[RMDB]
RNA sequence: GGGAACGACUCGAGUAGAGUCGAAAACUGGGGGUCAGCUUGACGGAAUUAUGAACAGAAGUCGAUGAUUACAGCUGUGUGCAUAUUCCCUUAGGAUUGUUUGCUGAGUGUGUGAAAUACAAUAAUCACCAAUAUGUAAUUUCGAUUACAUAUUGGUAAAAGAAACAACAACAACAAC
Reactivity to 2A3 in 0.01 (KOAc 150mM, MgCl2 10mM, bicine 150mM(pH8.5), 24C), signal-to-noise 6, nucleotides 027 to 126: c020u020g020g000g000g000g010u020c010a010g020c010u060u080g040a020c020g000g040a020a020u140u040a040u130g030a040a010c010a030g090a140a010g070u100c090g080a150u140g030a060u110u180a040c010a040g020c020u020g010u010g020u050g050c010a000u010a040u040u030c010c000c000u030u060a070g060g030a110u090u120g060u130u080u080g030c030u010g000a090g040u070g010u010g020u030g120a070a090a060u150a050c050a030a060u140a110a030u120c050
Reactivity to DMS in 0.01 (KOAc 150mM, MgCl2 10mM, bicine 150mM(pH8.5), 24C), signal-to-noise 9, nucleotides 027 to 126: c030u000g010g010g010g010g010u000c050a050g010c030u000u000g010a080c230g010g000a060a040u000u010a030u000g000a080a050c040a040g000a120a050g020u000c070g010a130u010g010a120u010u000a080c090a080g010c020u000g010u000g010u010g010c020a030u000a070u000u000c010c000c080u000u000a090g010g010a090u000u000g010u000u000u000g010c020u000g000a070g010u000g010u000g010u000g010a050a060a080u010a040c100a050a070u010a070a090u010c130